Structure probing data (DMS and 2A3) for a 177-nucleotide construct.
RNA sequence: GGGAACGACUCGAGUAGAGUCGAAAACUGCGACCGAGGCGAAAGCGACCAACCUGAAGGACGCCAUUUCGAAGGUACGCCAGGCCAAACAGAAGCUCGAGCAGCCUGCGGCGCUGCAGGCCGUGCGGACUGGUCCAUACUUCGGUAUGGACCAGUCAAAAGAAACAACAACAACAAC
Reactivity to DMS in 0.01 (KOAc 150mM, MgCl2 10mM, bicine 150mM(pH8.5), 24C), signal-to-noise 2, nucleotides 027 to 126: c030u000g000c050g030a050c030c000g010a120g000g000c050g040a050a060a180g050c040g000a120c040c030a110a120c190c170u020g050a100a080g030g020a100c120g020c020c140a150u030u000u000c010g010a100a210g020g020u010a110c050g030c040c070a100g000g000c030c010a140a110a100c190a010g000a140a080g000c030u000c040g000a090g000c070a080g010c000c000u000g000c000g010g000c090g000c050u000g000c030a030g000g020c030c040g040u000g030c130g010
Reactivity to 2A3 in 0.01 (KOAc 150mM, MgCl2 10mM, bicine 150mM(pH8.5), 24C), signal-to-noise 2, nucleotides 027 to 126: c020u030g000c010g030a020c010c020g060a040g140g010c070g020a070a030a020g000c010g020a020c000c010a100a090c020c130u140g120a130a020g040g000a010c010g060c030c010a100u040u070u020c030g010a030a010g010g040u100a180c000g000c010c010a020g010g020c020c000a030a130a070c010a040g200a220a010g010c030u110c100g030a060g090c020a020g000c000c000u020g030c010g170g000c160g040c150u150g000c000a010g050g000c030c000g090u070g050c030g040
High 2A3 reactivity points to a flexible backbone, as in loops and unpaired stretches. Source: RMDB library OK2TRN, as collected in RNAgym. The RNA was probed in 150 mM KOAc, 10 mM MgCl2 and 150 mM bicine (pH 8.5) at 24 C. For 2A3 the reverse transcriptase was SuperScript II with manganese.